An RNA of 177 nucleotides, treated with DMS and read out base by base. For DMS, 2,386 sequencing reads were counted. For DMS the reverse transcriptase was MarathonRT. The data come from the RNA Mapping Database (RMDB), library TTRDES.
[RMDB]
RNA sequence: GGGAACGACUCGAGUAGAGUCGAAAAGAUAUGGACCAUGUGAGGGACAUGCCUCCCGUUCGGAAACGAACGUCAGGCAACAGCCCUACAUGGUCCUAAGUCAAAACGCAUGUGUUCGCACAUGCGAGAGUACCUCUGUGUUCGCACAGAGGUACUCAAAAGAAACAACAACAACAAC
Reactivity to DMS in 0.01 (KOAc 150mM, MgCl2 10mM, bicine 150mM(pH8.5), 24C), signal-to-noise 2, nucleotides 027 to 126: g000a010u000a180u020g010g000a010c000c010a000u000g040u020g000a020g020g020g000a090c160a080u010g010c000c010u010c030c050c000g000u000u010c000g000g000a010a020a050c010g000a020a010c000g030u000c110a000g030g020c000a060a060c230a160g000c010c000c000u000a030c000a020u010g000g000u000c010c000u000a010a030g000u010c040a130a070a120a130c000g010c000a010u000g010u010g030u000u010c220g020c010a010c000a010u000g020c000g010a040